[RMDB]
RNA sequence: GGGAACGACUCGAGUAGAGUCGAAAACAUCUCCUGUCCUGGGUGUUGUGGGGAGAUGAGUCUGGAUCCUACCUGGAUUCUGCCUCCAAGCUGGGGGAAGAAAGCUCCCAUGUUGUGAGGCAUAAAAAGGCCCACAUGUCAAAGAACUACAGCCUGAAUUUAUAAUGGACUUCGGUCCAUUAUAAAUAAAAGAAACAACAACAACAAC
Reactivity to DMS in 0.01 (KOAc 150mM, MgCl2 10mM, bicine 150mM(pH8.5), 24C), signal-to-noise 2, nucleotides 027 to 156: c030a080u000c010u000c010c050u000g010u010c020c040u000g000g010g060u000g020u000u000g010u000g020g000g010g010a100g000a050u010g000a090g030u000c000u010g000g000a040u000c040c030u000a160c130c120u000g010g000a110u000u010c060u000g020c020c000u040c010c020a060a080g010c100u010g010g000g020g030g000a020a100g000a100a140a230g000c040u000c010c010c000a080u000g020u000u000g020u010g000a050g000g000c020a020u000a030a070a070a120a050g010g000c000c000c010a050c080a130u010g040u000c050a100a090a130g010a060a030c040u000a090c030a080g010c020c020u000g000a120
Reactivity to 2A3 in 0.01 (KOAc 150mM, MgCl2 10mM, bicine 150mM(pH8.5), 24C), signal-to-noise 1, nucleotides 027 to 156: c010a010u010c000u010c000c000u070g140u090c020c040u110g070g050g030u080g070u090u090g010u130g030g000g020g000a050g020a060u040g000a020g070u010c030u020g000g000a020u000c020c000u070a230c040c060u050g010g000a010u020u010c000u030g010c010c000u010c010c020a030a040g020c020u010g000g000g010g000g030a020a070g150a090a050a010g130c020u030c020c020c000a050u080g040u050u020g010u120g030a010g000g000c010a010u050a010a030a040a000a010g030g020c000c080c000a020c020a020u070g060u080c030a000a070a160g040a200a140c040u050a020c060a020g000c000c000u020g010a000